[RMDB]
RNA sequence: GGGAACGACUCGAGUAGAGUCGAAAAGAUAUGGAUGAUGGACAUGCUGCAGGCUCGGAAACGAGCCUGACCAGCAACAGCCAUAUCCUAAGUCAAAGGGAUCGAAGGCUUCGGCCUUCGAUCCCAACUAGAUUAAGCUCUUCGGAGCUUAAUCUAGAAAAGAAACAACAACAACAAC
Reactivity to DMS in 0.01 (KOAc 150mM, MgCl2 10mM, bicine 150mM(pH8.5), 24C), signal-to-noise 1, nucleotides 027 to 126: g050a050u010a280u020g010g000a000u010g000a090u000g000g000a090c080a150u000g000c000u000g050c000a020g000g010c010u010c010g000g000a050a050a160c000g000a030g020c000c000u000g010a010c270c010a020g000c000a040a030c130a100g040c000c000a020u010a060u000c000c010u000a070a140g020u000c050a040a100a190g000g000g000a020u000c010g000a020a000g010g020c020u000u020c260g020g000c000c000u020u000c000g000a000u010c010c000c030a000a020